[RMDB]
RNA sequence: GGGAACGACUCGAGUAGAGUCGAAAAGAAAAUACCGCACCGGUUGACACCGGUGUUAUGGCGUGAACCGCGUUCACGUCGGCUUCCAAUUUCUGGCGGGCUACAGGCCUCGGCCCUCUUGUAGUGAGAACCCCUUGUAUUUCGAUACAAGGGGUUCAAAAGAAACAACAACAACAAC
Reactivity to DMS in 0.01 (KOAc 150mM, MgCl2 10mM, bicine 150mM(pH8.5), 24C), signal-to-noise 2, nucleotides 027 to 126: g000a060a020a100a040u000a150c120c020g000c000a000c030c000g020g040u010u010g050a160c240a240c000c000g000g000u000g000u000u020a070u030g020g010c000g020u000g000a030a030c030c270g020c300g010u010u010c020a020c020g000u000c010g000g000c120u020u030c060c050a140a160u000u040u000c070u010g000g010c050g000g010g000c010u000a030c170a050g000g000c020c010u010c050g010g000c020c030c040u000c030u040u000g010u020a000g010u000g010a180
Reactivity to 2A3 in 0.01 (KOAc 150mM, MgCl2 10mM, bicine 150mM(pH8.5), 24C), signal-to-noise 2, nucleotides 027 to 126: g070a010a050a000a000u170a010c010c020g000c000a000c000c000g080g020u060u170g050a050c100a030c150c000g020g000u020g000u000u000a020u080g000g000c000g000u010g000a020a010c060c160g170c180g110u030u000c000a000c000g000u020c010g000g000c060u070u050c040c010a110a180u030u040u100c070u040g000g020c000g010g010g000c000u030a010c010a080g050g000c000c000u030c070g070g000c000c000c010u010c010u020u020g010u030a040g030u040g070a040

An RNA of 177 nucleotides, treated with DMS and 2A3 and read out base by base. Source: RMDB libraries RFM100 and RFMREP, as collected in RNAgym. For DMS the reverse transcriptase was MarathonRT.